[RMDB]
RNA sequence: GGGAACGACUCGAGUAGAGUCGAAAAGCAGGCAGCUCAGUAAGGCCUUGCAAGUGAACUGCGUGGUAAGGAAGCUCCUGGUACAGCUGAGACGUCUGUAUUGGUGGGUGGAGACUAUGACUGCCCAAUAUAAAUUAUGGUUCGCCAUAAUUUAUAUAAAAGAAACAACAACAACAAC
Reactivity to 2A3 in 0.01 (KOAc 150mM, MgCl2 10mM, bicine 150mM(pH8.5), 24C), signal-to-noise 4, nucleotides 027 to 126: g020c010a010g030g000c010a020g000c040u010c040a030g030u100a270a110g060g000c010c000u030u040g020c060a050a030g060u060g120a160a090c030u030g030c080g180u200g060g080u220a060a040g020g040a050a000g010c000u020c010c000u010g000g020u050a080c010a010g010c010u020g010a010g020a050c020g010u000c010u020g060u040a130u050u130g120g030u090g020g000g010u030g020g040a080g030a060c080u100a130u240g060a070c010u020g000c020c000c000a010
Reactivity to DMS in 0.01 (KOAc 150mM, MgCl2 10mM, bicine 150mM(pH8.5), 24C), signal-to-noise 9, nucleotides 027 to 126: g010c030a020g010g010c010a080g010c020u010c020a030g010u000a090a160g000g000c010c010u000u000g010c090a090a060g010u010g000a170a290c040u000g000c050g030u000g010g020u010a070a070g010g010a160a300g010c030u000c020c010u000g000g010u000a030c040a300g000c010u000g000a060g010a060c100g010u000c000u000g010u000a080u010u000g010g010u000g010g000g030u000g010g010a140g010a080c170u000a100u010g000a130c020u000g000c000c000c010a080
Conditions: 150 mM KOAc, 10 mM MgCl2 and 150 mM bicine (pH 8.5), 24 C. The record gives the reactivity of an RNA of 177 nucleotides to 2A3 and DMS. For 2A3, 9,901 sequencing reads were counted. Values cover nucleotides 27 to 126. For DMS the reverse transcriptase was MarathonRT.